Structure probing data (2A3 and DMS) for a 207-nucleotide construct. DMS adducts were read by reverse transcription with MarathonRT. It was measured as part of the RMDB library OK3TST. The reactions ran in a buffer of 150 mM KOAc, 10 mM MgCl2 and 150 mM bicine (pH 8.5), at 24 C. The DMS profile rests on 2,546 reads.

RNA sequence: GGGAACGACUCGAGUAGAGUCGAAAACUUAUUCAGUCUUGUUAGGCGACUCACUUCUCUUAAAUUCUCAGCCGUUCAAUAAACAGAUUCAGAUGAUGAGGUUUGGCAUGCUGAAUGGCCUAAGUAUGCUUUCUUCCCCUUCUGAGCUUGGCAAGAACCUAGAUGAACUUUUCGAAGUUCAUCUAGGAAAAGAAACAACAACAACAAC
Reactivity to 2A3 in 0.01 (KOAc 150mM, MgCl2 10mM, bicine 150mM(pH8.5), 24C), signal-to-noise 4, nucleotides 027 to 156: c010u080u080a050u200u120c050a080g070u020c050u070u110g050u080u100a100g100g000c010g070a060c020u030c040a050c030u170u130c080u010c000u070u160a110a140a120u230u010c040u020c060a030g000c010c000g050u050u080c060a060a130u160a170a140a020c060a020g080a170u010u100c020a010g050a070u050g010a050u080g030a070g040g000u090u090u030g030g020c000a030u010g000c000u010g030a090a200u150g060g000c000c000u010a020a000g020u010a020u030g000c000u060u060u020c030u050u030c030c010c000c000u020u080c000u000g000a000g010c030u040u080g020g000c020a020a020g080a020a010
Reactivity to DMS in 0.01 (KOAc 150mM, MgCl2 10mM, bicine 150mM(pH8.5), 24C), signal-to-noise 1, nucleotides 027 to 156: c000u000u020a160u000u000c070a180g020u010c050u000u000g010u000u000a120g030g000c000g010a090c040u000c020a060c070u000u010c030u000c050u000u000a070a050a140u000u000c020u000c000a090g010c030c000g000u010u000c050a080a160u000a090a080a110c060a060g000a100u000u000c010a070g050a100u000g010a120u000g010a060g010g030u000u000u000g020g000c010a020u010g000c000u000g000a110a120u000g040g020c030c010u000a090a080g050u000a020u010g000c010u000u000u000c050u000u000c010c000c000c080u010u000c060u000g000a060g000c030u010u000g030g030c090a060a110g000a080a270